[RMDB]
RNA sequence: GGGAACGACUCGAGUAGAGUCGAAAAUAAAAGAUCACAACAACUAUACGUUGAAAAGUAUACAAUAGUACGAUAAGCGCAAGAUCAACUUGCGAGAUAUGGCGCAACAUAUCAAACAACAAAAAAAGUACCAAAAUAAGUUCGCUUAUUUUGGUACAAAAGAAACAACAACAACAAC
Reactivity to DMS in 0.01 (KOAc 150mM, MgCl2 10mM, bicine 150mM(pH8.5), 24C), signal-to-noise 3, nucleotides 027 to 126: u030a060a030a060a140g010a070u010c050a080c090a120a100c060a060a080c100u000a080u000a050c060g000u010u000g020a050a120a090a100g030u000a040u000a040c100a050a090u000a160g020u000a110c080g010a060u000a020a190g000c010g000c000a010a020g000a170u040c230a080a110c020u000u000g000c040g010a090g000a020u000a010u000g010g000c130g030c160a060a130c010a000u000a000u000c010a130a040a100c070a000a050c050a030a000a090a060a100a060a140
Reactivity to 2A3 in 0.01 (KOAc 150mM, MgCl2 10mM, bicine 150mM(pH8.5), 24C), signal-to-noise 3, nucleotides 027 to 126: u130a000a090a010a020g150a040u130c030a010c030a150a040c000a000a020c050u070a070u060a210c030g010u010u060g090a080a070a010a010g040u060a040u030a110c060a080a110u080a140g100u060a020c020g040a090u050a170a070g050c000g020c010a000a020g000a070u130c020a060a240c050u010u010g010c010g020a010g000a010u030a010u010g070g000c120g000c110a040a020c010a030u020a000u020c000a000a040a040c020a030a010c010a010a160a010a020a000a000a020